Notes: Chemical mapping of a 207-nucleotide RNA with 2A3. Values cover nucleotides 27 to 156.

[RMDB]
RNA sequence: GGGAACGACUCGAGUAGAGUCGAAAAGGACUGCGCAGUCCGGCAACAUCAGCAGAGAGCCCGCUAUACGUGACGGAUUAGCUGAAGCGUACAGAAAUAUUGAGCCUCCUGCAAGAGGCAGCCAAGCAAAACGUACGUGAGUUCGCUCACGUACGAAGGAUUGGUCUAGGUUCGCCUAGACCAAUCCAAAAGAAACAACAACAACAAC
Reactivity to 2A3 in 0.01 (KOAc 150mM, MgCl2 10mM, bicine 150mM(pH8.5), 24C), signal-to-noise 1, nucleotides 027 to 156: g010g000a010c010u060g030c100g040c060a020g000u000c000c000g010g000c020a060a030c030a090u050c010a020g020c040a010g060a000g000a000g080c030c040c000g020c020u060a030u020a130c030g080u050g040a020c030g040g020a080u090u150a100g030c000u000g010a020a020g020c000g050u050a030c030a030g200a060a190a050u290a120u120u160g000a050g050c000c020u010c010c000u100g050c040a120a010g000a020g000g010c020a000g040c040c000a050a000g060c040a070a070a030a040c020g000u000a000c000g000u000g000a000g000u060u110c110g040c090u000c000a000c000g000u000a000c000g000a020a000